[RMDB]
RNA sequence: GGGAACGACUCGAGUAGAGUCGAAAAAUGAAAAUAUGCCAUUCGGAAGUGGUUUAGCCUCAACCAGUGCAAAUCAUACAGCAUUAUUAAUCGGUAUUUUACGUGGAAAUGAUUAUGCGCACAAGGAACUAUCUCGCGCUUUAUUAGAAGUAUUGGGCGGACUUACGUUUUUCGAAACGUAAGUCCGAAAAGAAACAACAACAACAAC
Reactivity to 2A3 in 0.01 (KOAc 150mM, MgCl2 10mM, bicine 150mM(pH8.5), 24C), signal-to-noise 2, nucleotides 027 to 156: a000u040g040a030a000a000a020u230a160u240g000c010c010a030u090u040c040g180g050a050a000g080u020g020g020u100u160u160a040g010c000c000u120c080a080a080c020c050a070g010u030g000c010a000a040a040u030c010a000u040a130c020a050g060c020a010u050u050a030u120u050a180a130u070c020g100g040u110a190u040u200u050u020a040c010g040u140g080g000a000a210a030u010g010a080u050u080a060u130g000c040g050c040a020c000a080a040g020g040a120a060c010u080a100u110c150u070c080g060c000g010c080u000u060u050a110u170u060a040g040a090a020g010u040a080u080u080g000g000g050